The record gives the reactivity of an RNA of 207 nucleotides to 2A3 and DMS.
It was measured as part of the RMDB library OK3TST.
Reactivities are given for positions 27 through 156.
RNA sequence: GGGAACGACUCGAGUAGAGUCGAAAAGGUUAUCUCAGACAAAUCACCUGCAUCCUCUGGGCUUCCACCUUCUUUAUACAAUGGACUUGGGAAUGCAUUGAUGGUCUCAGGUACACUCUUGAGAAUAACUCUCCCAGCAUUCAAUUACAGGCUGGUGCAAUAGAUAGGCCUUCGGGCCUAUCUAUUGAAAAGAAACAACAACAACAAC
Reactivity to 2A3 in 0.01 (KOAc 150mM, MgCl2 10mM, bicine 150mM(pH8.5), 24C), signal-to-noise 5, nucleotides 027 to 156: g030g020u030u010a010u010c020u010c030a020g020a030c020a030a300a030u040c010a030c040c030u020g010c010a010u020c000c010u040c040u030g030g060g010c070u130u040c030c010a050c050c000u140u090c050u110u300u100a190u050a100c130a110a160u100g020g040a030c050u050u060g020g000g000a040a050u070g010c010a020u020u070g020a040u050g030g020u010c020u010c020a010g000g020u020a040c050a020c150u140c020u060u080g030a030g090a140a090u110a110a030c010u000c010u010c030c000c010a010g000c000a010u120u300c060a110a200u200u170a170c080a100g120g000c000u030g050g000u090g030
Reactivity to DMS in 0.01 (KOAc 150mM, MgCl2 10mM, bicine 150mM(pH8.5), 24C), signal-to-noise 3, nucleotides 027 to 156: g000g000u000u000a040u010c010u000c020a080g000a080c060a080a110a100u000c040a090c070c040u000g030c040a070u000c010c020u000c020u000g020g010g000c090u010u010c020c000a040c050c070u010u000c080u000u000u000a170u000a110c130a080a080u000g010g010a060c020u000u010g040g000g010a020a030u000g000c020a180u000u000g020a070u000g000g010u000c030u000c030a060g010g000u010a060c080a090c050u000c020u000u000g010a050g000a100a140u000a030a080c050u000c040u000c000c010c010a080g040c060a180u000u010c100a100a130u000u010a160c070a090g000g010c010u000g020g030u010g010